[RMDB]
RNA sequence: GGGAACGACUCGAGUAGAGUCGAAAAAGUGAGUCUGGCUCGUUACGACGAGCCAUACUCACAACGGUUUUCCUAAAUCGUCGUGAGACGGACCUUGGAAAACCUAGUAUUUAAAUAACUAGGUCAAAUUAGCCUAGAUCCUUCGGGAUCUAGGCAAGUUGGAGUAACUGUUCGCAGUUACUCCAACAAAAGAAACAACAACAACAAC
Reactivity to 2A3 in 0.01 (KOAc 150mM, MgCl2 10mM, bicine 150mM(pH8.5), 24C), signal-to-noise 3, nucleotides 027 to 156: a000g010u000g000a000g010u020c020u010g010g000c000u010c000g030u010u050a090c230g020a000c000g000a120g010c000c000a000u010a000c000u000c000a000c000a010a000c000g000g000u000u000u000u000c000c000u000a010a010a010u040c000g010u000c000g020u000g170a100g000a020c000g000g000a000c000c000u010u010g010g000a000a000a000a020c000c010u000a010g020u020a060u040u140u130a120a200a130u140a080a020c080u040a030g000g000u010c010a010a040a230u230u180a030g000c000c000u000a000g000a000u020c030c000u020u020c080g070g000g000a010u010c010u000a000g000g020c000a000a000